Structure probing data (2A3) for a 207-nucleotide construct.
RNA sequence: GGGAACGACUCGAGUAGAGUCGAAAAACCUUUGUGCAUGGCGUAACGCACCAACAGCCUAAUCGUAACAUCUCGCCCAUUGGGCGAGUGGAUUAGGACAUGGUGCGGAGAAGCCAUGCACUCUGGUAAAAGCCUCUUAGCUUCGGCUAAGAGGCAAGAGCUCAAUACUCUUCGGAGUAUUGAGCUCAAAAGAAACAACAACAACAAC
Reactivity to 2A3 in 0.01 (KOAc 150mM, MgCl2 10mM, bicine 150mM(pH8.5), 24C), signal-to-noise 2, nucleotides 027 to 156: a020c040c010u040u000u030g010u010g000c000a020u000g000g030c000g000u010a030a030c000g040c000a000c000c000a020a110c050a150g080c010c000u000a010a010u020c010g200u140a090a080c020a250u170c010u010c020g000c000c000c140a300u230u300g000g000g000c000g010a000g000u000g010g020a000u000u000a000g000g000a000c010a090u020g000g000u000g000c000g000g000a000g010a000a000g020c040c000a000u000g020c000a010c000u010c010u000g000g020u050a100a110a000a020g000c000c000u000c000u020u000a000g000c020u020u040c300g040g000c000u000a010a010g000a000g010g000c010a000a000